[RMDB]
RNA sequence: GGGAACGACUCGAGUAGAGUCGAAAAGAUAUGGACGAUGACCCAGUGAUGGUGUCGGAAACGACAUUCAUCAAGCUGCAUCGUCCUAAGUCAAAAGUUCAUCACAGCCUUCGGGCUGUGAUGAACAGCAUCUGUCUACGUUCGCGUAGACAGAUGCAAAAGAAACAACAACAACAAC
Reactivity to DMS in 0.01 (KOAc 150mM, MgCl2 10mM, bicine 150mM(pH8.5), 24C), signal-to-noise 2, nucleotides 027 to 126: g000a020u000a260u030g000g000a020c000g010a020u000g000a300c210c300c100a160g030u010g000a000u000g000g020u000g000u000c000g010g000a040a020a090c000g010a000c000a000u020u010c000a000u000c000a160a150g000c020u000g000c010a000u000c010g000u000c000c000u010a020a080g010u000c040a100a090a190a120g010u000u000c010a000u000c000a000c000a010g000c000c010u000u020c300g030g000g010c000u000g020u000g000a000u000g000a010a010c000a130
Reactivity to 2A3 in 0.01 (KOAc 150mM, MgCl2 10mM, bicine 150mM(pH8.5), 24C), signal-to-noise 2, nucleotides 027 to 126: g020a000u040a030u060g010g000a020c000g000a000u060g130a230c080c170c190a000g010u060g010a000u020g000g000u010g010u000c010g010g000a020a030a030c000g050a000c000a070u300u300c020a020u200c080a080a050g060c020u020g000c010a010u000c000g000u010c000c000u020a090a020g030u030c030a090a050a070a170g000u000u000c010a010u000c000a000c000a000g000c010c000u130u190c300g090g000g010c000u010g000u030g000a000u000g000a000a020c010a000
An RNA of 177 nucleotides, treated with DMS and 2A3 and read out base by base.
2A3 adducts were read by reverse transcription with SuperScript II with manganese.
It was measured as part of the RMDB library TTRDES.
Values cover nucleotides 27 to 126.
Conditions: 150 mM KOAc, 10 mM MgCl2 and 150 mM bicine (pH 8.5), 24 C.